[RMDB]
RNA sequence: GGGAACGACUCGAGUAGAGUCGAAAAUUAAACGAACGCCUGUUCAAUAACCGCGGUGCGGACGGUUUAUUCCACUGAAGCGAACGCUGCUCGCACUUAAAUGGUUUAGGGAGCGAAGUUCGGGAUGUCUAGAAGGGACAUUCGUGUCCCUUCUAGAAAAAGAAACAACAACAACAAC
Reactivity to DMS in 0.01 (KOAc 150mM, MgCl2 10mM, bicine 150mM(pH8.5), 24C), signal-to-noise 3, nucleotides 027 to 126: u030u000a050a080a180c010g010a030a020c010g010c170c080u010g020u010u000c040a080a070u020a040a000c030c030g020c140g000g010u000g010c000g010g000a040c010g010g000u000u000u020a170u000u010c000c070a240c260u020g010a110a140g000c100g030a000a020c300g000c030u000g000c010u000c000g000c060a000c000u000u000a050a090a080u010g000g000u000u000u000a060g010g010g010a030g010c010g020a060a160g010u000u000c000g000g020g000a120u000g010

An RNA of 177 nucleotides, treated with DMS and read out base by base. The DMS profile rests on 2,002 reads. The RNA was probed in 150 mM KOAc, 10 mM MgCl2 and 150 mM bicine (pH 8.5) at 24 C. Values cover nucleotides 27 to 126.